[RMDB]
RNA sequence: GGGAACGACUCGAGUAGAGUCGAAAAAAGCACCCAAACGCUAAAGACACAGGCUUUUUAGGCUUAUUGGGGGAGAGUUUGGCUUUCACUUUGUAUCCCUAUAAUUAGGGAUUUUACAGAGUUUGAGGUCAAAAGACAGAUUCGUCUGUCUUUUGACAAAAGAAACAACAACAACAAC
Reactivity to DMS in 0.01 (KOAc 150mM, MgCl2 10mM, bicine 150mM(pH8.5), 24C), signal-to-noise 3, nucleotides 027 to 126: a060a050g030c100a100c110c020c030a050a040a110c210g000c030u000a030a060a070g000a080c040a220c250a120g000g000c100u000u020u010u010u010a080g010g000c020u000u000a120u000u000g020g000g020g000g020a060g020a070g010u000u000u000g010g020c040u010u020u000c060a080c000u000u010u000g000u000a030u000c000c000c000u010a030u010a110a170u010u000a000g000g000g010a130u000u010u010u010a000c000a010g010a000g000u000u000u010g000a090g000
Reactivity to 2A3 in 0.01 (KOAc 150mM, MgCl2 10mM, bicine 150mM(pH8.5), 24C), signal-to-noise 1, nucleotides 027 to 126: a000a000g070c010a020c030c000c000a080a020a010c050g000c000u030a170a000a000g080a010c050a020c070a180g190g070c010u120u020u010u060u140a070g080g060c010u070u070a080u110u110g000g000g000g020g020a040g000a000g020u020u040u220g050g010c000u030u020u130c000a020c000u040u010u000g010u020a010u050c020c000c000u060a060u010a130a150u200u030a000g000g000g000a010u040u000u030u050a000c000a000g030a060g000u000u100u070g050a030g020